[RMDB]
This 207-nucleotide RNA was probed chemically with DMS and 2A3. The DMS profile rests on 15,575 reads. Reactivities are given for positions 27 through 156. Source: RMDB library OK3TST, as collected in RNAgym.
RNA sequence: GGGAACGACUCGAGUAGAGUCGAAAAGGUCUCCGCAGAUAUGAGUGAAACGGACAUCAACGGUGCGUCGGAUGAUACCGAAGCCAUGACAGAUGUGUCAGCAUCGUUGUCGACACACAUAACUGACUCAACGGUAUCGAAUACACCGAUAUAUUACGAAUUAGGUAAUGUUCGCAUUACCUAAUUCAAAAGAAACAACAACAACAAC
Reactivity to DMS in 0.01 (KOAc 150mM, MgCl2 10mM, bicine 150mM(pH8.5), 24C), signal-to-noise 5, nucleotides 027 to 156: g000g000u000c020u010c010c000g020c030a100g010a150u000a070u000g010a160g000u010g010a120a130a080c040g020g010a100c070a070u000c030a060a090c030g010g010u000g010c020g020u000c030g040g010a120u000g010a080u000a050c010c000g020a100a060g010c030c020a040u000g020a150c100a250g020a080u010g020u010g010u010c010a080g020c010a080u000c180g030u000u000g030u000c000g010a070c000a020c010a040c020a080u010a080a220c090u000g010a040c010u000c030a060a080c010g000g020u000a010u000c010g000a080a070u000a050c050a050c030c010g010a080u000a080u000a090u000u000a090c190
Reactivity to 2A3 in 0.01 (KOAc 150mM, MgCl2 10mM, bicine 150mM(pH8.5), 24C), signal-to-noise 9, nucleotides 027 to 156: g090g020u030c030u000c070c020g000c020a020g040a060u080a050u120g070a080g050u070g040a100a060a040c060g050g030a030c040a090u090c040a050a040c020g010g000u030g020c050g070u070c030g020g030a060u160g020a020u100a070c000c010g030a030a000g080c070c040a040u090g030a040c040a050g160a220u120g050u030g010u100c030a020g000c010a040u080c080g080u060u050g030u060c020g020a010c000a000c000a000c000a040u060a120a060c020u020g060a040c010u020c130a090a080c040g020g000u010a010u060c040g020a050a030u120a070c050a030c020c000g000a010u040a010u030a010u160u110a100c170